[RMDB]
RNA sequence: GGGAACGACUCGAGUAGAGUCGAAAAAGUUUAGCCUGUUAGGUGAGGCUCCUAUGCAAACACAGGCCACUGCCCAAAAAUGUCCAAAGACGCCAAUGGGUAGAACAGGGAUUGUCGGAUUAAGGCUAAAACAGCCCAUGCUUCGGCAUGGGCUGAACAAUUGUUAGACGUUCGCGUCUAACAAUUGAAAAGAAACAACAACAACAAC
Reactivity to 2A3 in 0.01 (KOAc 150mM, MgCl2 10mM, bicine 150mM(pH8.5), 24C), signal-to-noise 1, nucleotides 027 to 156: a000g030u050u060u060a020g000c010c010u000g060u100u080a070g000g020u010g070a040g050g000c000u010c060c010u100a100u140g050c020a030a120a100c040a010c010a060g080g000c010c000a020c000u050g010c000c000c000a030a030a000a000a000u010g000u010c020c020a120a110a100g010a000c010g050c010c000a030a020u070g000g040g000u000a010g000a050a010c040a030g030g030g040a050u050u110g070u110c040g020g010a010u100u140a100a020g010g000c010u010a020a000a000a100c000a000g000c050c010c000a000u000g000c000u080u100c230g100g000c020a000u040g050g010g000c000u010g010a000a000
Reactivity to DMS in 0.01 (KOAc 150mM, MgCl2 10mM, bicine 150mM(pH8.5), 24C), signal-to-noise 1, nucleotides 027 to 156: a110g000u010u010u000a090g030c000c000u030g020u000u000a030g010g010u010g020a070g030g010c030u000c030c060u000a080u020g000c040a050a080a110c060a070c010a120g030g020c000c030a110c030u020g000c000c030c000a000a010a080a100a110u010g010u000c010c040a100a080a200g000a040c010g010c050c050a070a220u010g000g020g010u000a040g030a040a050c050a110g030g000g020a050u010u000g010u020c020g010g000a160u010u010a050a050g000g000c020u000a040a030a040a230c010a000g030c000c000c000a010u000g000c000u010u000c300g060g000c000a000u000g010g000g000c000u000g000a010a040